[RMDB]
RNA sequence: GGGAACGACUCGAGUAGAGUCGAAAAGAUAUGGACGUGUUAACGCAACAGCCAGUCACUCGGAAACGAGUGCUGGACAUGCGUCCACACGUCCUAAGUCAAACAUUAGCUGUUCGCAGCUAAUGAACACCCUCAGAGUGUUCGCACUCUGAGGGUGAAAAGAAACAACAACAACAAC
Reactivity to DMS in 0.01 (KOAc 150mM, MgCl2 10mM, bicine 150mM(pH8.5), 24C), signal-to-noise 2, nucleotides 027 to 126: g010a050u030a300u040g000g030a000c000g040u000g000u000u000a140a000c030g000c000a070a100c300a250g000c000c000a000g000u030c010a000c000u020c020g020g010a080a090a150c010g010a010g040u010g040c030u000g000g000a030c100a260u010g000c020g020u000c070c300a060c000a000c000g000u000c000c000u000a000a080g000u020c010a150a070a220c040a010u010u000a000g000c000u000g030u010u030c100g030c060a000g000c000u000a000a000u000g010a050a220
Reactivity to 2A3 in 0.01 (KOAc 150mM, MgCl2 10mM, bicine 150mM(pH8.5), 24C), signal-to-noise 2, nucleotides 027 to 126: g040a010u060a020u180g010g000a000c000g020u030g000u000u110a040a000c000g000c030a150a140c060a250g110c010c010a000g270u300c030a000c000u000c000g020g040a060a080a070c020g020a000g000u000g020c000u000g000g000a000c000a020u130g000c010g000u000c010c020a000c000a010c000g000u040c000c000u040a050a000g020u010c070a090a070a160c020a020u000u000a020g000c010u000g050u120u080c300g040c140a000g000c010u000a000a000u000g000a050a000
This 177-nucleotide RNA was probed chemically with DMS and 2A3. The 2A3 profile rests on 3,295 reads. For DMS the reverse transcriptase was MarathonRT. Reactivities are given for positions 27 through 126. The DMS profile rests on 1,340 reads.